Structure probing data (2A3 and DMS) for a 177-nucleotide construct. The data come from the RNA Mapping Database (RMDB), libraries RFM100 and RFMREP. For DMS the reverse transcriptase was MarathonRT.
RNA sequence: GGGAACGACUCGAGUAGAGUCGAAAAACGGUAUACGUACCGAGGGUCAAUGAUGAGAACCUUAUAUUGUCCUGAAGAGAGGUGAUGACUUAAAAAUCAUGCUCAAUAGGAUUACGCUGAGGCCCAAAGAGUUAUUAACAUUCGUGUUAAUAACUCUAAAAGAAACAACAACAACAAC
Reactivity to 2A3 in 0.01 (KOAc 150mM, MgCl2 10mM, bicine 150mM(pH8.5), 24C), signal-to-noise 9, nucleotides 027 to 126: a000c020g000g010u030a040u040a060c210g060u020a010c020c010g010a100g020g000g010u030c050a090a100u130g080a070u090g030a060g050a160a050c010c000u090u020a130u020a030u150u180g020u010c010c000u030g080a170a030g100a020g000a010g040g070u020g010a010u010g020a040c120u220u260a050a050a040a030a010u010c010a010u080g120c000u000c010a010a050u050a080g010g000a010u040u060a030c050g010c050u030g020a020g020g020c000c000c000a030a090
Reactivity to DMS in 0.01 (KOAc 150mM, MgCl2 10mM, bicine 150mM(pH8.5), 24C), signal-to-noise 9, nucleotides 027 to 126: a110c020g010g010u010a020u010a060c190g030u000a020c010c010g010a140g010g010g010u000c020a060a130u000g010a100u020g010a150g010a110a130c050c030u010u030a100u020a080u010u010g010u000c000c000u000g010a090a170g010a090g000a040g010g020u010g000a020u000g010a130c180u020u050a030a060a050a120a040u000c000a000u010g000c000u010c000a050a130u020a010g000g000a020u000u010a050c090g030c060u000g000a300g000g000c010c000c020a080a110